About this RNA:
The record gives the reactivity of an RNA of 177 nucleotides to DMS and 2A3. Reactivities are rounded to 0.1 and cut off at 0 and 3. Source: RMDB library TTRDEL, as collected in RNAgym. For DMS, 1,585 sequencing reads were counted. The RNA was probed in 150 mM KOAc, 10 mM MgCl2 and 150 mM bicine (pH 8.5) at 24 C.
[RMDB]
RNA sequence: GGGAACGACUCGAGUAGAGUCGAAAAGAUAUGGAUGGUAGUAGCUGCGCAGCGAUGAAAUCGGAAACGAUGGAGCUGCGAACUACAGCGAAACCAUCCUAAGUCAAAAGACGAGUUCGCUCGUCAACCGAUUAAGCUAGUUCGCUAGCUUAAUCGGAAAAGAAACAACAACAACAAC
Reactivity to DMS in 0.01 (KOAc 150mM, MgCl2 10mM, bicine 150mM(pH8.5), 24C), signal-to-noise 2, nucleotides 027 to 126: g010a040u010a300u000g010g020a000u000g010g000u000a030g020u010a130g020c000u000g000c010g000c000a010g010c010g030a120u040g010a070a070a020u000c000g010g000a140a110a130c000g010a010u010g010g010a060g020c000u000g010c000g000a010a040c070u000a260c000a030g000c010g000a230a270a100c020c000a000u000c000c000u000a020a050g000u000c030a090a030a110a110g010a010c010g040a020g010u000u000c280g010c010u020c010g030u000c010a050a140
Reactivity to 2A3 in 0.01 (KOAc 150mM, MgCl2 10mM, bicine 150mM(pH8.5), 24C), signal-to-noise 2, nucleotides 027 to 126: g040a040u060a020u170g000g000a010u010g000g000u000a000g000u030a010g040c010u020g000c000g000c010a010g000c010g140a300u070g030a020a050a010u020c040g010g010a060a030a030c010g000a010u020g040g040a020g000c000u000g010c000g000a000a000c010u120a030c020a000g000c010g000a050a000a000c000c000a000u000c000c000u000a020a010g020u040c020a020a000a070a130g010a000c010g010a000g030u090u130c300g070c120u010c020g000u010c000a000a020